[RMDB]
RNA sequence: GGGAACGACUCGAGUAGAGUCGAAAAUCACCUCCGGAGAGCUGGGAGGGACUGCACGGUUAUGCCACUAGUGCCUGCUUCACAGAUCUUUUAUUCCCAAUGGAGUACCAGGCAAAAAAAUGAGAGGAUGGCCAGAGCAUGAUGUCUGGGAGAAACACAUGGAUAAUCAGUUCGCUGAUUAUCCAUGAAAAGAAACAACAACAACAAC
Reactivity to 2A3 in 0.01 (KOAc 150mM, MgCl2 10mM, bicine 150mM(pH8.5), 24C), signal-to-noise 3, nucleotides 027 to 156: u070c010a050c050c010u000c010c020g050g040a100g020a030g030c020u070g000g020g040a000g030g020g020a030c060u020g000c020a030c070g040g040u130u090a070u210g060c040c030a020c030u070a040g020u020g070c000c010u070g020c010u060u050c040a060c010a100g050a120u050c020u050u120u030u080a070u040u020c000c000c000a020a070u140g010g000a020g020u020a060c020c030a010g000g000c000a030a030a020a030a000a000a100u160g020a040g000a000g050g020a030u020g050g000c010c050a030g010a010g050c030a050u070g020a020u060g110u000c020u030g010g060g020a040g010a030a070a000c070a000
Reactivity to DMS in 0.01 (KOAc 150mM, MgCl2 10mM, bicine 150mM(pH8.5), 24C), signal-to-noise 2, nucleotides 027 to 156: u010c040a070c010c020u000c000c020g020g000a150g030a080g000c060u000g000g020g010a070g040g040g040a050c110u020g000c060a070c030g030g030u000u020a050u010g000c050c060a120c070u000a150g010u000g000c030c070u000g000c020u000u000c020a040c000a110g000a050u000c030u020u000u000u000a240u030u000c010c000c020a140a210u000g010g000a030g010u010a080c050c020a080g030g010c010a000a020a060a060a090a040a110u010g020a150g020a050g000g030a070u000g020g010c040c000a080g000a060g010c080a040u000g000a110u000g000u000c030u000g010g030g010a110g010a060a040a060c060a080
Description
Source: RMDB library OK3TST, as collected in RNAgym. This 207-nucleotide RNA was probed chemically with 2A3 and DMS. The RNA was probed in 150 mM KOAc, 10 mM MgCl2 and 150 mM bicine (pH 8.5) at 24 C. For 2A3, 2,434 sequencing reads were counted. For DMS, 3,625 sequencing reads were counted.